The record gives the reactivity of an RNA of 177 nucleotides to DMS and 2A3. For 2A3, 3,118 sequencing reads were counted. Values cover nucleotides 27 to 126.

RNA sequence: GGGAACGACUCGAGUAGAGUCGAAAAGAAAAGCGCGGAAUGAAUACACGUAGGAAAGAAAGUACGAAAGUACGGUGGACUGAAGAACUACGUGUGAAUAGUCCACAAUUUCGCGCGAAAAAUAAAAGGGAAACAUAUAGUUCGCUAUAUGUUUCCCAAAAGAAACAACAACAACAAC
Reactivity to DMS in 0.01 (KOAc 150mM, MgCl2 10mM, bicine 150mM(pH8.5), 24C), signal-to-noise 3, nucleotides 027 to 126: g010a090a090a100a210g020c000g030c000g030g020a000a020u000g000a120a110u010a080c030a000c000g000u030a000g020g010a090a120a150g010a090a080a120g000u010a020c000g000a160a120a130g000u000a000c000g030g040u000g000g010a020c010u000g010a110a090g020a110a140c000u010a000c000g040u000g000u010g000a090a020u000a040g010u000c020c020a060c030a180a010u000u010u000c000g000c000g000c000g020a000a090a060a060a060u080a060a080a090a100
Reactivity to 2A3 in 0.01 (KOAc 150mM, MgCl2 10mM, bicine 150mM(pH8.5), 24C), signal-to-noise 3, nucleotides 027 to 126: g060a000a110a010a000g020c030g010c000g000g020a000a000u030g060a060a000u150a090c030a000c050g010u080a010g060g110a040a150a060g110a060a170a020g010u000a000c000g020a140a060a000g010u020a010c020g000g010u000g000g030a000c020u030g110a060a030g030a140a000c000u000a010c010g000u000g020u020g000a010a000u020a020g000u000c000c010a010c000a010a010u000u010u010c000g000c010g030c030g010a050a000a000a000a000u290a000a020a010a040